[RMDB]
RNA sequence: GGGAACGACUCGAGUAGAGUCGAAAAAUCUUUAAGCAGAUGGCAGGUUCACCCCGUACGGUGCGGAAGUUCGCGCUUCCGUGAAACGCGAAAAUCGGACGGUGGCUGCAAGUAGCAUCGCAAAACCUAUAGCUUGUUAGGUUCGCCUAACAAGCAAGUCCUUGACUACGUUCGCGUAGUCAAGGACAAAAGAAACAACAACAACAAC
Reactivity to 2A3 in 0.01 (KOAc 150mM, MgCl2 10mM, bicine 150mM(pH8.5), 24C), signal-to-noise 1, nucleotides 027 to 156: a000u100c060u000u140u040a100a010g000c130a090g010a010u070g020g000c000a070g110g020u220u170c030a030c010c010c000c000g000u040a000c030g000g090u100g000c010g000g010a000a000g010u080u270c070g080c070g000c090u000u010c030c020g010u000g150a140a170a000c220g030c020g110a220a010a000a080u060c000g020g120a050c060g030g030u070g030g020c040u010g000c000a020a020g030u030a000g020c000a000u030c030g000c000a000a000a040a280c010c050u170a150u070a170g000c020u000u000g000u000u000a000g010g070u050u040c190g020c080c000u030a010a010c000a000a000g000c000a000a000